The data come from the RNA Mapping Database (RMDB), library TTRDES.
Structure probing data (2A3 and DMS) for a 177-nucleotide construct.
For DMS the reverse transcriptase was MarathonRT.

RNA sequence: GGGAACGACUCGAGUAGAGUCGAAAAGAUAUGGAUUCGCUUGGGAGCCAGAGAGUCGGAAACGACUCGAUGGCUUUGAUCAAGGAAUCCUAAGUCAAACACCUAUCUGCUUCGGCAGAUAGGUGAAGUCAUUUGUAAUGUUCGCAUUACAAAUGACAAAAGAAACAACAACAACAAC
Reactivity to 2A3 in 0.01 (KOAc 150mM, MgCl2 10mM, bicine 150mM(pH8.5), 24C), signal-to-noise 1, nucleotides 027 to 126: g010a000u020a000u050g020g000a010u010u020c090g050c300u000u000g010g000g020a010g000c000c000a000g020a000g000a000g010u000c000g000g000a140a010a000c000g000a000c000u000c000g000a000u000g010g010c010u000u080u020g000a000u010c000a000a000g020g000a010a000u000c000c010u000a000a000g010u000c030a100a070a080c000a000c000c010u000a010u000c000u010g030c010u030u060c160g220g000c030a020g000a020u020a000g040g010u010g000a020a020
Reactivity to DMS in 0.01 (KOAc 150mM, MgCl2 10mM, bicine 150mM(pH8.5), 24C), signal-to-noise 5, nucleotides 027 to 126: g010a010u000a060u020g000g000a020u000u000c000g010c000u000u000g000g000g000a010g030c000c000a010g000a300g000a010g030u000c000g030g000a010a020a030c000g020a010c000u000c010g000a220u010g040g010c000u000u000u030g000a020u020c000a010a010g000g000a010a010u000c000c010u000a010a070g000u000c010a180a160a300c010a010c000c000u000a000u000c000u000g000c000u000u010c290g050g020c000a010g000a000u000a000g010g010u000g000a010a060